[RMDB]
RNA sequence: GGGAACGACUCGAGUAGAGUCGAAAAGAAACCGUCGUUUCCGACGUAAAAGGAAGCAAAGAAAGAAAGAAAGGUACGAAACCCGGUACCAACGGGAAAAGAAAAGUCGAUCCAGACGAAGGAGAAAGGGAUAUAGAUAGUUCGCUAUCUAUAUCCCAAAAGAAACAACAACAACAAC
Reactivity to 2A3 in 0.01 (KOAc 150mM, MgCl2 10mM, bicine 150mM(pH8.5), 24C), signal-to-noise 4, nucleotides 027 to 126: g050a030a030a000c020c000g000u020c010g010u020u060u000c000c000g000a000c020g060u200a000a000a000a030g020g000a010a000g040c110a010a140a060g180a050a080a010g110a060a060a010g130a070a090a060g040g000u010a020c060g050a060a040a040c000c000c000g000g020u070a070c000c000a010a010c030g020g070g040a050a120a000a020g160a020a100a010a000g060u010c010g030a060u040c040c030a020g020a090c060g020a040a040g090g070a040g080a030a040a070
Reactivity to DMS in 0.01 (KOAc 150mM, MgCl2 10mM, bicine 150mM(pH8.5), 24C), signal-to-noise 5, nucleotides 027 to 126: g000a090a090a120c150c010g000u010c000g000u010u000u000c010c000g000a030c020g000u040a020a010a040a060g000g000a010a010g000c270a070a110a080g000a080a060a080g000a050a060a100g000a040a070a060g000g000u020a040c050g020a050a130a080c040c030c030g020g000u000a070c140c110a120a090c100g000g020g000a050a030a050a130g000a050a080a090a110g020u010c010g000a130u020c030c010a100g000a050c050g030a040a060g010g000a050g000a090a120a110
The data come from the RNA Mapping Database (RMDB), library OK1LIB. This 177-nucleotide RNA was probed chemically with 2A3 and DMS. DMS adducts were read by reverse transcription with MarathonRT. 2A3 adducts were read by reverse transcription with SuperScript II with manganese. The DMS profile rests on 8,255 reads.